Background: This 177-nucleotide RNA was probed chemically with DMS and 2A3. Source: RMDB library OK2TRN, as collected in RNAgym. Values are in units of 0.01, from 0 to 300, in steps of 10. DMS adducts were read by reverse transcription with MarathonRT.

[RMDB]
RNA sequence: GGGAACGACUCGAGUAGAGUCGAAAAGACACGACGGAGACGUCGUGUCAAAGAGUGGGAAACCACUCAAAGAGCCACAGCUUCGGCUGUGGCUCAAGGCGCGGCUAUGUCCGCGGAACAAACGCAACACUUUUAGUGGUUUCGACCACUAAAAGUGAAAAGAAACAACAACAACAAC
Reactivity to DMS in 0.01 (KOAc 150mM, MgCl2 10mM, bicine 150mM(pH8.5), 24C), signal-to-noise 2, nucleotides 027 to 126: g010a020c010a000c010g000a010c000g020g000a300g000a280c010g000u000c000g000u010g020u000c000a020a050a090g010a020g020u000g000g000g000a210a070a170c000c000a010c000u000c000a010a060a110g000a040g000c020c000a010c010a000g050c010u000u020c300g020g040c000u000g050u000g000g000c000u000c010a010a070g000g010c030g030c020g000g010c000u000a090u010g000u000c000c010g030c000g000g000a030a070c230a010a060a110c140g010c130a060a150
Reactivity to 2A3 in 0.01 (KOAc 150mM, MgCl2 10mM, bicine 150mM(pH8.5), 24C), signal-to-noise 2, nucleotides 027 to 126: g000a010c000a000c000g020a000c020g030g030a070g010a060c010g000u000c010g010u000g010u010c000a000a000a010g020a010g000u020g000g010g020a020a100a070c000c010a010c000u010c000a030a060a000g010a000g020c000c000a000c010a030g060c040u140u180c300g110g010c030u010g040u000g030g000c000u000c000a000a000g000g000c000g030c000g020g010c090u220a160u300g090u030c000c010g010c000g010g020a030a010c060a080a070a010c060g010c070a060a060